[RMDB]
RNA sequence: GGGAACGACUCGAGUAGAGUCGAAAACGUGCGUACUGGGCCGCCGGCACAAUGUUCCACCCAGCCGUCUCAGAGGGCGCGGUUCGACAACGAUCAGCCAGCAGGUCAGCGGGGUCCUCCUAGCUAGCACGCAGGGAUUAUUCGUAAUCCCUGCGUGAAAAGAAACAACAACAACAAC
Reactivity to DMS in 0.01 (KOAc 150mM, MgCl2 10mM, bicine 150mM(pH8.5), 24C), signal-to-noise 1, nucleotides 027 to 126: c100g020u000g000c060g050u010a090c030u010g010g000g030c090c160g000c130c030g010g000c060a120c100a080a100u000g010u000u000c050c050a070c150c000c020a200g010c010c000g000u010c030u010c060a050g010a120g000g010g000c100g000c100g000g010u000u000c030g000a050c100a090a090c100g020a040u010c080a070g030c030c030a030g020c040a060g020g020u000c070a100g030c060g010g010g010g030u020c020c020u000c020c010u000a050g010c120u010a090g000